RNA sequence: GGGAACGACUCGAGUAGAGUCGAAAAGGUGUUUUCUCAUUGUGUGAACAUCAUGGAGUGUGUGUUUACAGAAACCUUCAUGGUCCAGCCUGAUGGUCUAGCCUGCUGCUCCUGGGCUACAGACCUGCAUCAGUCACGCAUUCGUGCGUGACUGAUGAAAAGAAACAACAACAACAAC
Reactivity to 2A3 in 0.01 (KOAc 150mM, MgCl2 10mM, bicine 150mM(pH8.5), 24C), signal-to-noise 1, nucleotides 027 to 126: g190g010u030g010u040u000u080u110c040u020c020a140u060u250g080u020g030u020g090a050a020c020a010u070c010a020u020g010g050a070g040u120g040u000g000u010g090u090u200u170a030c090a030g160a060a040a020c030c000u040u050c030a050u050g040g060u050c020c020a030g000c010c030u040g050a090u100g000g000u000c020u040a000g000c010c000u070g040c100u020g000c010u060c100c060u040g000g020g000c010u080a000c040a030g050a000c010c010u010g020
Reactivity to DMS in 0.01 (KOAc 150mM, MgCl2 10mM, bicine 150mM(pH8.5), 24C), signal-to-noise 1, nucleotides 027 to 126: g020g020u000g010u000u000u000u000c010u000c050a180u000u030g010u000g020u020g000a020a040c190a020u000c050a030u000g000g000a040g000u000g030u000g000u000g010u000u020u010a100c140a110g010a120a100a030c040c010u000u010c030a030u000g000g000u000c040c090a230g020c010c030u000g000a050u000g020g000u000c020u000a100g020c010c010u010g010c140u000g000c090u010c040c030u030g000g000g020c000u040a120c250a100g010a040c010c010u000g000
Chemical mapping of a 177-nucleotide RNA with 2A3 and DMS. Conditions: 150 mM KOAc, 10 mM MgCl2 and 150 mM bicine (pH 8.5), 24 C.